[RMDB]
Chemical mapping of a 177-nucleotide RNA with 2A3 and DMS. The DMS profile rests on 1,770 reads.
RNA sequence: GGGAACGACUCGAGUAGAGUCGAAAAAACUCGUCGCCACAGUCACAGAACAGCCGCCGAGACGCUUUCUCUCCGCAGUUAGGACAGUAGACGUGGUCGUCGGCGACGUGUUCACCACACUGUCCGCCCUGAAAAUCGGUUUCGACCGAUUUUCAGGAAAAGAAACAACAACAACAAC
Reactivity to 2A3 in 0.01 (KOAc 150mM, MgCl2 10mM, bicine 150mM(pH8.5), 24C), signal-to-noise 4, nucleotides 027 to 126: a000a000c040u030c000g000u010c000g010c000c000a050c040a100g080u080c010a060c010a220g110a210a060c030a030g100c020c030g010c000c010g040a030g000a070c020g020c060u060u140u010c050u030c010u010c020c030g030c000a110g050u130u150a050g060g010a010c010a030g080u090a040g010a100c090g030u060g020g050u070c060g030u030c070g000g000c000g000a010c010g000u020g030u010u020c010a020c030c000a000c000a000c010u020g000u030c000c010g000c000
Reactivity to DMS in 0.01 (KOAc 150mM, MgCl2 10mM, bicine 150mM(pH8.5), 24C), signal-to-noise 2, nucleotides 027 to 126: a040a060c040u000c000g000u000c010g000c000c020a110c210a200g000u040c120a140c070a070g000a070a080c110a200g010c020c000g010c020c090g000a080g000a080c090g070c080u010u000u030c030u020c040u010c020c060g070c120a020g000u050u070a030g000g000a000c020a010g020u000a020g040a050c170g000u030g030g030u020c030g010u000c050g030g000c020g000a000c000g000u000g000u000u020c040a110c040c040a090c060a060c000u020g000u000c060c030g000c150

The RNA was probed in 150 mM KOAc, 10 mM MgCl2 and 150 mM bicine (pH 8.5) at 24 C.